Conditions: 150 mM KOAc, 10 mM MgCl2 and 150 mM bicine (pH 8.5), 24 C. Chemical mapping of a 207-nucleotide RNA with DMS and 2A3. For DMS the reverse transcriptase was MarathonRT. For 2A3, 2,138 sequencing reads were counted.
[RMDB]
RNA sequence: GGGAACGACUCGAGUAGAGUCGAAAACAUGCUGUUCGCAGCAUGAAAAAGCGUACUACCUGCUAGCUACCGCUGGAGGCAAAUCCCAAAUAGGAUUUGCCGAUGAAAGCGCGUAGCUUGGACCAGGUAUCGCAAAAAACAGAGAUUCGUCUCUGAACUAUUUUAUGAAGUUCGCUUCAUAAAAUAGAAAAGAAACAACAACAACAAC
Reactivity to DMS in 0.01 (KOAc 150mM, MgCl2 10mM, bicine 150mM(pH8.5), 24C), signal-to-noise 2, nucleotides 027 to 156: c000a000u000g030c000u000g010u010u000c300g060c000a030g000c010a000u020g000a020a060a100a110a230g010c020g020u010a050c100u000a010c000c000u010g010c020u000a020g010c010u000a020c000c000g020c000u000g030g000a150g050g020c020a010a020a010u000c030c000c000a050a240a290u000a030g050g020a030u000u000u000g010c000c000g000a040u010g000a170a170a070g040c000g020c240g060u000a000g010c020u000u000g030g000a110c150c000a040g000g000u000a030u010c000g050c000a010a040a060a050a050a100c040a050g000a100g000a150u000u010c080g000u000c010u010c000u000g010a130a300
Reactivity to 2A3 in 0.01 (KOAc 150mM, MgCl2 10mM, bicine 150mM(pH8.5), 24C), signal-to-noise 2, nucleotides 027 to 156: c000a000u000g010c000u020g050u150u150c240g010c110a000g000c000a000u020g050a110a010a010a020a000g030c030g040u110a110c060u010a010c030c040u020g000c000u010a000g010c000u000a000c010c010g010c010u000g010g010a000g000g000c000a000a000a000u010c020c020c030a140a290a130u300a080g000g000a000u000u000u000g040c000c010g070a110u020g000a000a000a000g000c030g040c110g020u000a000g020c000u000u010g000g020a040c050c050a000g000g000u010a010u100c030g000c000a000a070a200a000a000a000c020a010g010a000g000a010u040u050c130g130u010c080u000c000u000g000a020a010